[RMDB]
About this RNA: This 177-nucleotide RNA was probed chemically with 2A3 and DMS. For 2A3 the reverse transcriptase was SuperScript II with manganese. Values cover nucleotides 27 to 126. Source: RMDB libraries RFM100 and RFMREP, as collected in RNAgym. Conditions: 150 mM KOAc, 10 mM MgCl2 and 150 mM bicine (pH 8.5), 24 C.
RNA sequence: GGGAACGACUCGAGUAGAGUCGAAAAAGCUGGCACGUACGCGUGCCAGCAAAACAAAGGUAUCGACACUAGUCAGCGAGGGUUCGCCCACUAGUGCGAUUUUUAGCGCACGGUACGCCGUGCGCAAUUAUUAGGAAACGUUCGCGUUUCCUAAUAAAAAAGAAACAACAACAACAAC
Reactivity to 2A3 in 0.01 (KOAc 150mM, MgCl2 10mM, bicine 150mM(pH8.5), 24C), signal-to-noise 5, nucleotides 027 to 126: a000g010c010u010g010g010c010a000c030g030u060a040c300g030c020g100u020g010c010c020a000g010c010a000a010a000a000c060a020a080a030g160g030u110a010u020c010g120a090c090a000c000u050a010g050u140c110a060g060c050g070a060g050g300g090u190u090c040g060c010c010c000a010c010u000a010g000u000g000c000g000a000u020u000u020u060u240a020g000c000g000c010a000c020g020g000u070a070c270g050c080c010g030u000g000c000g000c000a000a000
Reactivity to DMS in 0.01 (KOAc 150mM, MgCl2 10mM, bicine 150mM(pH8.5), 24C), signal-to-noise 5, nucleotides 027 to 126: a140g020c010u010g010g030c010a020c030g020u010a080c220g030c060g070u010g040c000c010a000g010c020a020a010a070a100c190a070a080a090g040g030u030a020u000c000g010a130c000a010c000u010a000g030u000c180a170g000c000g000a030g020g020g000u060u000c020g010c000c030c300a050c010u010a020g000u020g000c000g010a000u000u000u020u000u010a070g000c000g020c020a010c060g040g000u030a060c230g010c020c000g020u020g030c010g060c010a000a020